This 207-nucleotide RNA was probed chemically with 2A3 and DMS.
For 2A3 the reverse transcriptase was SuperScript II with manganese.
The RNA was probed in 150 mM KOAc, 10 mM MgCl2 and 150 mM bicine (pH 8.5) at 24 C.
It was measured as part of the RMDB library ARCHII.
RNA sequence: GGGAACGACUCGAGUAGAGUCGAAAAGCACGGCAAAAGAUGGGAUAUUGAGCUCCCAUCAUACACUUCUAAAUUGUCGGGAACGACCUGGAAGGGACUUGCGUUCCUUCCAAAAGGCUUUGGUUACCGCGGUCCGCCGAGAGGUGAGAGCGAGCAAGUAAUUAUGCAAGUUCGCUUGCAUAAUUACAAAAGAAACAACAACAACAAC
Reactivity to 2A3 in 0.01 (KOAc 150mM, MgCl2 10mM, bicine 150mM(pH8.5), 24C), signal-to-noise 3, nucleotides 027 to 156: g030c020a020c060g010g020c050a050a040a020a050g010a000u000g000g000g020a010u030a140u140u270g040a090g020c050u000c000c010c000a000u010c000a000u020a000c090a000c040u110u150c050u160a140a150a100u080u060g020u010c000g000g000g030a030a060c070g020a020c020c010u010g010g010a000a000g030g000g000a000c000u120u220g040c120g010u000u000c000c000u000u000c010c000a010a030a000a000g040g000c010u080u050u060g020g010u060u050a030c010c020g020c000g040g050u020c020c010g000c010c010g040a060g010a020g030g040u030g030a140g000a000g030c000g020a030g040c000a100a160
Reactivity to DMS in 0.01 (KOAc 150mM, MgCl2 10mM, bicine 150mM(pH8.5), 24C), signal-to-noise 2, nucleotides 027 to 156: g010c010a120c070g080g030c010a120a010a190a140g010a060u000g000g020g010a110u000a300u000u000g000a230g020c190u010c000c010c000a020u010c000a090u000a090c070a090c100u010u000c040u020a030a100a120u000u000g030u000c010g010g000g050a060a080c040g010a040c010c090u010g000g010a120a030g010g010g000a000c010u030u000g010c300g000u000u000c000c000u000u010c010c010a020a020a110a080g010g020c020u030u010u000g010g020u000u000a020c070c050g000c020g030g000u000c040c030g010c050c020g010a300g000a150g000g000u010g000a160g020a110g000c060g010a070g000c010a080a160